[RMDB]
Source information: This 207-nucleotide RNA was probed chemically with 2A3. The 2A3 profile rests on 496 reads. The RNA was probed in 150 mM KOAc, 10 mM MgCl2 and 150 mM bicine (pH 8.5) at 24 C.
RNA sequence: GGGAACGACUCGAGUAGAGUCGAAAACACUCACCAUCAUUCUGUAUCAUCCUCACUCAUUGGGACUCUGUAUAACCUCAUCCUGCGUCUCACAGGAGGCGACGAUCUGAUUGGCCGAUCCUGCCUUCCGGAAACAGUUAGUCUGAUGCGAACCCAACGCGAUGUAGUGGUUCGCCACUACAUCGCGAAAAGAAACAACAACAACAAC
Reactivity to 2A3 in 0.01 (KOAc 150mM, MgCl2 10mM, bicine 150mM(pH8.5), 24C), signal-to-noise 1, nucleotides 027 to 156: c110a000c000u080c010a060c020c020a090u090c010a010u060u150c030u110g060u040a060u080c080a010u020c000c000u010c030a090c030u120c030a140u040u110g050g030g020a110c010u000c000u080g100u130a060u050a140a060c010c040u070c030a070u060c040c020u030g030c000g000u060c020u000c020a140c010a110g080g080a040g000g060c030g040a140c020g020a010u050c020u070g150a300u210u190g120g100c070c030g000a020u000c000c000u000g000c000c010u020u130c010c000g050g000a000a040a110c050a000g040u080u120a040g040u010c010u020g060a050u000g000c020g020a010a010c020c000c000a050a130